[RMDB]
RNA sequence: GGGAACGACUCGAGUAGAGUCGAAAAAUGUGCGGCAAAGAAACAUUGUUUUUGCAAAGGCACUUCGCAAUGUGUGCUCAAACAUUGCUUAUUCAAACACGCUUCACAAUGUGCGACAAAGAAACAUAAAACGUUUAGUACUUCGGUACUAAACGAAGGACAAGGAGAACUUCGGUUCUCCUUGUCCAAAAGAAACAACAACAACAAC
Reactivity to 2A3 in 0.01 (KOAc 150mM, MgCl2 10mM, bicine 150mM(pH8.5), 24C), signal-to-noise 2, nucleotides 027 to 156: a000u120g070u040g010c020g000g000c020a020a090a070g130a110a110a000c050a090u060u070g110u070u040u030u070u030g030c030a100a000a070g100g000c010a020c010u080u070c040g000c020a030a020u010g010u000g010u000g000c050u030c090a100a070a000c000a020u020u020g010c020u060u150a150u090u050c010a020a050a000c060a000c110g040c020u050u040c030a000c030a050a190u080g010u000g180c020g020a010c030a000a110a000g090a000a060a000c040a000u220a090a140a010a000c000g000u000u040u000a010g000u000a000c030u040u040c280g050g000u000a000c000u000a000a000a010c000g020a000a070